[RMDB]
RNA sequence: GGGAACGACUCGAGUAGAGUCGAAAACAGGAAGAUGAGGAGGACGACGACGAUGACGACGAGCACGACCUUGGCGAGGGUCAUGAAACAACCAUAGGGCAGCGUACGGUCACCAUAUUCCGUCAGACCACGUAUCGAAUUUCGAUUCGAUACGUGGAAAAGAAACAACAACAACAAC
Reactivity to 2A3 in 0.01 (KOAc 150mM, MgCl2 10mM, bicine 150mM(pH8.5), 24C), signal-to-noise 6, nucleotides 027 to 126: c030a020g050g050a060a060g030a060u150g030a040g060g040a030g030g030a020c040g000a000c000g010a010c030g030a080u040g020a010c040g020a000c040g020a020g030c030a010c100g040a040c020c000u060u080g070g030c090g050a080g050g000g020u020c010a020u080g010a030a100a010c080a020a020c020c020a050u110a060g050g040g000c010a020g020c020g040u040a040c050g010g020u020c010a020c010c020a030u060a050u140u050c010c010g070u080c040a010g010a050
Reactivity to DMS in 0.01 (KOAc 150mM, MgCl2 10mM, bicine 150mM(pH8.5), 24C), signal-to-noise 3, nucleotides 027 to 126: c070a170g020g010a030a040g020a030u040g010a100g010g010a050g020g010a050c050g010a130c100g000a070c040g030a120u010g000a090c080g020a090c180g010a090g020c030a100c090g010a040c020c040u010u040g010g010c120g040a050g050g000g000u000c050a050u020g010a080a060a080c220a120a080c040c010a050u050a110g000g000g060c030a070g010c050g000u030a030c050g000g020u010c060a020c060c040a030u000a080u010u020c010c010g020u000c050a070g010a280